The record gives the reactivity of an RNA of 177 nucleotides to DMS and 2A3.
2A3 adducts were read by reverse transcription with SuperScript II with manganese.
DMS adducts were read by reverse transcription with MarathonRT.
Values are in units of 0.01, from 0 to 300, in steps of 10.

RNA sequence: GGGAACGACUCGAGUAGAGUCGAAAAAGAGGUUACGACCUCAGCGGAAGGUUGCCAUACGCCCUGACCCGGCAGGUAUGGAACACCGCGUGGCGACCGGCGUGGACAACGACGUCCUCCGGAUCAAUAACACUCUUGGAUUCGUCCAAGAGUGUUAAAAAGAAACAACAACAACAAC
Reactivity to DMS in 0.01 (KOAc 150mM, MgCl2 10mM, bicine 150mM(pH8.5), 24C), signal-to-noise 9, nucleotides 027 to 126: a110g010a020g010g010u000u010a090c190g020a080c000c000u000c000a110g020c010g000g010a080a110g010g000u010u010g020c000c000a010u010a010c010g010c010c000c010u010g010a150c220c200c300g000g000c010a080g040g030u000a010u000g000g000a060a010c020a070c010c000g000c010g000u030g010g020c110g010a090c010c020g010g010c300g000u020g010g020a020c030a140a150c250g010a180c180g000u000c000c010u010c010c010g010g000a090u010c050a080a130
Reactivity to 2A3 in 0.01 (KOAc 150mM, MgCl2 10mM, bicine 150mM(pH8.5), 24C), signal-to-noise 9, nucleotides 027 to 126: a000g040a010g020g020u060u070a080c210g060a100c050c000u010c020a010g010c000g020g010a090a070g160g020u020u040g220c000c000a010u010a010c010g010c000c000c020u050g050a080c010c010c000g010g000c020a060g230g010u010a010u020g000g000a010a000c010a010c010c010g000c030g010u030g060g040c040g010a030c000c000g010g020c110g160u130g000g010a010c010a170a080c170g190a050c130g010u000c010c000u000c000c000g020g010a110u060c020a020a040